[RMDB]
RNA sequence: GGGAACGACUCGAGUAGAGUCGAAAACGUACGCGAGCGCGCUGAUCCGGUACCUGCGCGAGGCCUCGUCUGGCCCGUCAGCGCGAUCUCGAGGCCUGCGCACGGCCUGCGCUAGUACAGUACAGAGUGUAUUGCCCCAGUUCGCUGGGGCAAUACAAAAAGAAACAACAACAACAAC
Reactivity to 2A3 in 0.01 (KOAc 150mM, MgCl2 10mM, bicine 150mM(pH8.5), 24C), signal-to-noise 1, nucleotides 027 to 126: c050g000u040a020c080g050c150g070a050g060c040g020c010g000c080u080g070a160u070c060c030g020g110u150a300c000c000u000g000c000g000c020g090a040g000g000c000c000u010c000g030u000c040u060g090g020c020c000c000g280u170c090a040g080c020g000c030g070a060u070c050u000c040g010a000g030g000c000c000u050g000c000g000c010a030c010g010g000c000c030u030g000c000g020c000u020a060g030u030a040c030a030g040u010a050c030a030g080a060g150
Reactivity to DMS in 0.01 (KOAc 150mM, MgCl2 10mM, bicine 150mM(pH8.5), 24C), signal-to-noise 2, nucleotides 027 to 126: c090g010u000a010c020g010c110g010a100g030c110g010c020g040c150u000g000a120u000c100c040g040g020u010a090c120c150u010g000c050g040c020g010a050g020g000c000c040u000c030g010u010c090u010g010g030c140c020c090g010u020c180a110g020c220g000c040g000a050u020c020u000c010g010a030g000g010c020c000u000g060c020g020c030a020c130g030g000c140c050u000g010c020g000c010u000a080g020u000a080c110a070g000u000a030c070a180g000a120g000